RNA sequence: GGGAACGACUCGAGUAGAGUCGAAAAUCCGACGAGCUGAACGCUUUCGAAGGAAAGCUUGACCAGCUAAUCUUCUGCAACGCGAUUACGAGGACUGCCCUUAGAGGCUCAUGGCGAUAGGUCACCCAAAACUAUUUGAGGUUCGCCUCAAAUAGAACUGAAUGGUUUCGUUCGCGAAACCAUUCAGAAAAGAAACAACAACAACAAC
Reactivity to 2A3 in 0.01 (KOAc 150mM, MgCl2 10mM, bicine 150mM(pH8.5), 24C), signal-to-noise 2, nucleotides 027 to 156: u050c000c000g070a090c050g030a000g000c030u020g040a160a020c010g010c020u060u090u100c050g090a140a120g090g020a060a030a010g000c000u040u030g040a110c030c040a000g010c010u030a050a050u050c080u020u050c060u140g040c040a050a030c050g060c000g090a160u120u220a070c010g000a020g020g070a050c020u050g020c000c000c000u030u070a100g010a110g080g000c010u010c040a020u100g010g040c010g040a050u080a120g010g000u010c010a070c000c010c000a050a090a040a060c000u000a000u000u000u000g000a000g040g030u030u190c200g050c060c000u000c000a000a000a000u000a000g010a030a010